[RMDB]
RNA sequence: GGGAACGACUCGAGUAGAGUCGAAAAAGUGGGAGCGAAAGCGCCAGUGAAAUACCACUACCUUUAUCGUCUUUUUACUUAUUCAAUGAAGCGAAGCUGGGAUUAAUGUCUCACUUUUUAGUAUUAACAUCUUAUAUUUUUUCGAAAAUAUAAGAUGAAAAGAAACAACAACAACAAC
Reactivity to DMS in 0.01 (KOAc 150mM, MgCl2 10mM, bicine 150mM(pH8.5), 24C), signal-to-noise 5, nucleotides 027 to 126: a020g010u000g000g000g010a030g010c060g000a090a120a120g010c060g020c060c080a050g000u010g000a080a080a100u030a110c130c040a050c040u000a130c170c020u010u010u020a020u000c050g000u010c010u000u020u030u030u030a100c150u010u020a050u010u010c080a080a040u010g010a030a000g010c100g020a050a090g010c110u000g000g000g000a150u020u010a060a110u030g010u010c000u000c000a000c010u000u000u000u000u010a100g000u020a060u020u010a070a240
Reactivity to 2A3 in 0.01 (KOAc 150mM, MgCl2 10mM, bicine 150mM(pH8.5), 24C), signal-to-noise 9, nucleotides 027 to 126: a000g020u010g000g020g010a040g080c050g070a090a030a030g090c090g060c050c020a010g010u030g090a070a090a090u190a100c040c030a050c050u070a060c000c010u040u090u080a120u090c030g070u120c040u070u110u090u050u080a110c060u110u120a060u110u150c060a090a100u150g050a040a000g060c040g040a020a010g000c050u020g000g000g020a020u070u150a120a060u250g040u020c000u000c000a010c000u030u020u010u020u070a030g030u030a100u110u070a070a020